[RMDB]
RNA sequence: GGGAACGACUCGAGUAGAGUCGAAAACACGCCUCAGGAACCCUCCAACAGCCAGUUGGAGCGUGAUCCGCUGAGUGAAUCACCACAGAACGCGCCACAUGGGCACUCGGCAAACAAGACACACGAGCCAGCGCGGAAGCGUCGUCGACGUCGCAGACGAGAAUCACUGAUUCGUCAGUGAUUCUCGAAAAGAAACAACAACAACAAC
Reactivity to DMS in 0.01 (KOAc 150mM, MgCl2 10mM, bicine 150mM(pH8.5), 24C), signal-to-noise 2, nucleotides 027 to 156: c050a060c050g020c020c040u010c020a070g030g020a060a140c010c030c000u000c000c000a000a030c030a290g000c220c180a170g030u010u000g000g000a000g000c050g030u020g010a110u000c010c020g030c030u060g000a080g030u010g000a160a080u000c050a140c020c000a090c040a150g010a080a050c030g000c030g050c000c010a160c110a140u000g030g030g030c010a050c020u000c020g000g000c050a130a020a110c120a110a080g000a120c030a090c040a100c010g010a090g000c020c010a110g000c030g000c030g090g010a120a110g000c040g030u000c040g010u000c020g000a120c060g020u000c030g010c060a210g000a250
Reactivity to 2A3 in 0.01 (KOAc 150mM, MgCl2 10mM, bicine 150mM(pH8.5), 24C), signal-to-noise 4, nucleotides 027 to 156: c040a010c030g070c000c000u110c020a020g000g020a140a110c000c000c010u000c010c000a020a010c010a090g290c190c020a040g010u010u010g000g000a030g010c030g020u050g020a090u000c020c040g000c110u000g000a010g000u060g030a040a070u080c090a090c120c020a060c030a050g070a150a010c040g020c000g020c030c050a110c040a190u130g000g020g000c030a030c020u020c040g020g000c020a060a080a070c070a100a060g080a050c050a000c000a010c110g020a000g050c040c030a000g000c000g000c020g030g000a040a010g010c020g030u040c010g080u080c050g050a090c030g010u050c020g020c120a030g050a060
Structure probing data (DMS and 2A3) for a 207-nucleotide construct. As a SHAPE reagent, 2A3 marks flexible, mostly unpaired nucleotides at the ribose 2'-OH. For 2A3, 3,171 sequencing reads were counted. The DMS profile rests on 2,417 reads. 2A3 adducts were read by reverse transcription with SuperScript II with manganese. DMS adducts were read by reverse transcription with MarathonRT.